The record gives the reactivity of an RNA of 177 nucleotides to DMS and 2A3. 2A3 adducts were read by reverse transcription with SuperScript II with manganese. 2A3 is a SHAPE reagent: it acylates the 2'-hydroxyl of flexible nucleotides of all four kinds. The reactions ran in a buffer of 150 mM KOAc, 10 mM MgCl2 and 150 mM bicine (pH 8.5), at 24 C. DMS adducts were read by reverse transcription with MarathonRT.

RNA sequence: GGGAACGACUCGAGUAGAGUCGAAAACGUUGGUGCACUUGUCGCCAACGAAGGCUGGAAUGCCUCUGAGGAUGCGCUAACCGCUGUGAUUACUGCAGCGUAUCUGACUAUCUGUCAUCAGCGCUACCUAGUGUCUCGUCUUCGGACGAGACACUAGAAAAGAAACAACAACAACAAC
Reactivity to DMS in 0.01 (KOAc 150mM, MgCl2 10mM, bicine 150mM(pH8.5), 24C), signal-to-noise 2, nucleotides 027 to 126: c010g040u010u000g010g050u000g000c000a300c300u000u000g010u000c000g010c020c000a020a030c010g000a020a000g000g000c030u000g000g010a250a130u000g040c050c060u000c100u000g030a100g000g000a140u010g000c020g030c020u000a090a180c260c000g030c010u030g020u000g020a110u000u000a100c210u000g000c000a010g000c000g040u030a110u000c080u010g010a040c000u000a110u010c200u000g030u000c000a060u030c300a010g000c000g000c010u000a190c140
Reactivity to 2A3 in 0.01 (KOAc 150mM, MgCl2 10mM, bicine 150mM(pH8.5), 24C), signal-to-noise 2, nucleotides 027 to 126: c020g020u010u000g000g000u030g010c010a050c190u090u200g070u300c050g000c010c020a000a000c010g000a030a010g000g010c010u000g000g070a080a020u130g000c000c010u090c100u120g110a030g060g020a050u130g000c010g000c000u010a090a080c060c020g000c020u000g020u000g040a170u080u300a110c130u250g000c030a000g010c000g040u080a040u040c030u030g010a010c000u260a300u150c030u090g000u030c010a090u070c040a030g020c000g000c070u030a030c010